[RMDB]
RNA sequence: GGGAACGACUCGAGUAGAGUCGAAAAGGCAAGCACUGGAGCUUAUCAGUGUUAAUUCUAUAUAACGUGAUUCUUAAUUGGUUUUGCUCUGCAAGCUUUGCAAUUUUUUGAAAAAAACCAUCAUUAACAUAAAUCGCUAUUUCGAUAGCGAUUUAUGAAAAGAAACAACAACAACAAC
Reactivity to DMS in 0.01 (KOAc 150mM, MgCl2 10mM, bicine 150mM(pH8.5), 24C), signal-to-noise 3, nucleotides 027 to 126: g030g000c040a050a080g030c010a150c180u010g000g000a040g020c040u010u000a030u000c010a020g040u000g010u010u000a050a050u010u020c100u020a130u000a130u010a080a120c110g010u000g020a040u000u000c140u020u010a100a060u010u010g000g010u000u010u010u000g010c040u000c030u000g000c180a140a210g020c060u010u020u020g020c000a080a010u000u000u000u000u000u010g010a020a010a070a060a040a060a100c020c010a080u030c110a080u010u000a070a190
Reactivity to 2A3 in 0.01 (KOAc 150mM, MgCl2 10mM, bicine 150mM(pH8.5), 24C), signal-to-noise 2, nucleotides 027 to 126: g040g020c030a000a000g000c010a000c130u060g040g000a010g020c010u010u030a050u060c030a010g010u030g060u100u080a000a010u130u000c040u040a150u020a050u040a300a060c140g040u030g020a050u120u090c040u110u160a210a130u040u020g060g030u000u040u070u170g000c020u030c000u030g030c100a080a170g060c000u030u100u120g000c020a020a040u020u090u100u030u120u180g130a190a140a010a010a000a000a010c060c010a020u040c000a080u050u160a070a030

This 177-nucleotide RNA was probed chemically with DMS and 2A3. Conditions: 150 mM KOAc, 10 mM MgCl2 and 150 mM bicine (pH 8.5), 24 C. The data come from the RNA Mapping Database (RMDB), library OK2TST. 2A3 adducts were read by reverse transcription with SuperScript II with manganese. The DMS profile rests on 1,871 reads. For 2A3, 1,026 sequencing reads were counted.